[RMDB]
RNA sequence: GGGAACGACUCGAGUAGAGUCGAAAAGUGGAUUCGUCCACAAUGUACCGUAGGUGUGAACUACAGCUUGGUCCAGCUUGGACCAAGUCUUCGAAAGAGGACUUGCUAGCUGGUCCCAAGCUGCACACCUAAACGGCGAUCUACCCUUCGGGGUAAACAUUUGACGUUAAUUCGUUAACGUCAAAUGAAAAGAAACAACAACAACAAC
Reactivity to 2A3 in 0.01 (KOAc 150mM, MgCl2 10mM, bicine 150mM(pH8.5), 24C), signal-to-noise 7, nucleotides 027 to 156: g010u010g010g030a030u110u130c250g070u040c090c010a010c020a020a100u230g060u160a040c000c000g000u010a010g010g010u010g010u010g030a070a060c090u160a080c300a010g000c000u000u000g000g000u010c000c000a000g000c010u100u160g060g080a040c100c000a000a000g000u010c000u010u000c000g070a080a060a060g000a000g010g000a000c000u000u000g000c010u010a000g000c000u000g000g020u050c070c020c000a010a000g040c000u000g000c000a000c000a000c000c000u010a020a080a000c010g020g000c030g060a050u030c030u080a020c000c010c000u000u060c230g050g000g000g010u050a070a090a010
Reactivity to DMS in 0.01 (KOAc 150mM, MgCl2 10mM, bicine 150mM(pH8.5), 24C), signal-to-noise 4, nucleotides 027 to 156: g010u000g000g000a050u000u010c290g020u000c010c000a030c010a100a080u010g040u010a030c010c020g010u000a040g010g020u000g030u010g020a080a170c030u000a220c010a020g020c010u000u010g010g000u000c000c010a040g010c060u010u000g060g010a130c190c010a000a020g010u000c000u000u000c000g010a160a180a300g010a030g010g010a010c010u000u000g010c020u010a040g020c000u000g000g000u030c300c020c000a040a080g000c000u000g020c030a080c010a020c000c000u000a000a030a070c010g010g030c010g010a110u000c040u000a020c010c000c020u000u000c290g040g010g000g000u000a010a050a160